[RMDB]
RNA sequence: GGGAACGACUCGAGUAGAGUCGAAAACGGGUCUGAUUACCGGCUUGUCCCCCGCCGCGUCAGGCUUGGACAAAGGCCUUAUCCCCCUCUCCGGGCCUUUGUCCCCACUUUAAAGUCGCCAUGGCCAGCGAAAAGGAAUGUUCGCAUUCCUUUUCGCAAAAGAAACAACAACAACAAC
Reactivity to DMS in 0.01 (KOAc 150mM, MgCl2 10mM, bicine 150mM(pH8.5), 24C), signal-to-noise 1, nucleotides 027 to 126: c030g000g040g010u000c020u000g010a030u010u010a140c300c000g000g060c090u000u050g000u000c000c000c040c040c300g010c010c030g080c090g000u000c010a010g000g010c000u000u010g030g000a070c010a010a050a040g000g030c010c000u010u030a170u000c020c000c020c020c000u000c020u030c160c110g000g000g020c000c000u000u000u000g000u000c020c000c080c080a090c100u020u030u010a160a220a170g000u000c000g030c050c110a000u040g000g000c070c060a160
Reactivity to 2A3 in 0.01 (KOAc 150mM, MgCl2 10mM, bicine 150mM(pH8.5), 24C), signal-to-noise 1, nucleotides 027 to 126: c020g000g000g010u000c010u000g020a030u080u160a050c010c010g000g000c010u030u080g040u070c000c000c000c000c000g000c000c000g010c000g010u000c010a000g000g020c030u010u040g000g000a000c020a000a020a000g000g000c010c010u020u060a120u170c010c010c010c010c000u030c000u030c040c030g000g000g000c000c000u000u000u000g000u000c000c010c000c000a030c020u090u100u120a110a080a000g050u080c030g010c030c010a040u070g020g010c000c020a030